An RNA of 177 nucleotides, treated with 2A3 and DMS and read out base by base. 2A3 adducts were read by reverse transcription with SuperScript II with manganese. For DMS the reverse transcriptase was MarathonRT.
RNA sequence: GGGAACGACUCGAGUAGAGUCGAAAAGAUAUGGAGUACCAAGCUUUUGACGACGGUCGGAAACGACCGAUCGAUAAGCUUGUACUCCUAAGUCAAAGAGGAACACCGCUUCGGCGGUGUUCCUCAACGUAAUUGUAGUCUUCGGACUACAAUUACGAAAAGAAACAACAACAACAAC
Reactivity to 2A3 in 0.01 (KOAc 150mM, MgCl2 10mM, bicine 150mM(pH8.5), 24C), signal-to-noise 1, nucleotides 027 to 126: g030a000u010a010u060g000g000a010g020u010a000c120c170a040a010g030c030u150u270u300u300g040a010c040g010a000c000g000g010u020c000g000g000a020a000a020c030g010a010c000c040g060a140u010c000g040a030u050a180a050g000c000u020u000g010u010a000c000u000c010c000u000a010a000g020u010c010a090a050a110g060a030g050g020a020a030c020a000c000c010g010c060u120u170c300g100g000c000g050g000u000g010u000u000c020c000u020c000a000a000
Reactivity to DMS in 0.01 (KOAc 150mM, MgCl2 10mM, bicine 150mM(pH8.5), 24C), signal-to-noise 4, nucleotides 027 to 126: g000a020u000a180u010g010g010a010g000u000a010c300c300a010a010g000c000u000u000u000u010g020a290c070g000a020c030g020g010u010c000g010g020a030a010a040c010g010a010c000c000g000a010u000c000g020a070u000a030a030g010c010u000u000g000u000a000c000u000c010c000u000a010a000g000u000c010a070a090a130g000a000g000g010a010a010c000a010c000c000g010c010u000u020c160g030g010c010g010g000u000g000u000u000c000c000u000c000a010a050
The RNA was probed in 150 mM KOAc, 10 mM MgCl2 and 150 mM bicine (pH 8.5) at 24 C. Reactivities are given for positions 27 through 126.